[RMDB]
RNA sequence: GGGAACGACUCGAGUAGAGUCGAAAAAAAAAGAGCGUAAUCGCGUCAUUGAGUGACGUGAAGAUCAUCCAAGUGUGCUGUCUACAGUCCUAGAUAGCGCACAAUACGCUGAUGAUCAUUCAAAAAACUAUUACUUCAGCUUCGGCUGAAGUAAUAGAAAAGAAACAACAACAACAAC
Reactivity to DMS in 0.01 (KOAc 150mM, MgCl2 10mM, bicine 150mM(pH8.5), 24C), signal-to-noise 2, nucleotides 027 to 126: a030a030a040a040a050g010a020g020c080g020u020a020a040u010c030g000c000g000u010c000a060u000u010g010a200g030u010g000a000c000g000u010g030a060a130g000a040u010c000a010u000c020c100a110a130g000u020g000u000g000c000u000g010u000c000u000a010c120a080g020u010c220c200u000a010g000a000u000a010g020c000g000c000a010c000a070a060u000a170c100g000c050u010g010a020u000g000a020u000c020a130u010u000c100a000a040a060a110a060a060
Reactivity to 2A3 in 0.01 (KOAc 150mM, MgCl2 10mM, bicine 150mM(pH8.5), 24C), signal-to-noise 3, nucleotides 027 to 126: a000a000a000a000a000g140a030g000c080g100u110a120a070u070c010g010c010g030u010c010a030u080u300g200a110g260u020g010a000c000g000u020g000a030a020g000a010u020c010a000u000c000c030a120a120g020u010g000u010g030c000u000g000u000c000u000a030c070a220g180u110c020c000u020a000g000a010u000a000g040c010g000c000a000c000a000a000u110a020c000g000c120u050g000a000u000g010a000u000c040a050u080u200c100a100a090a030a020a030a030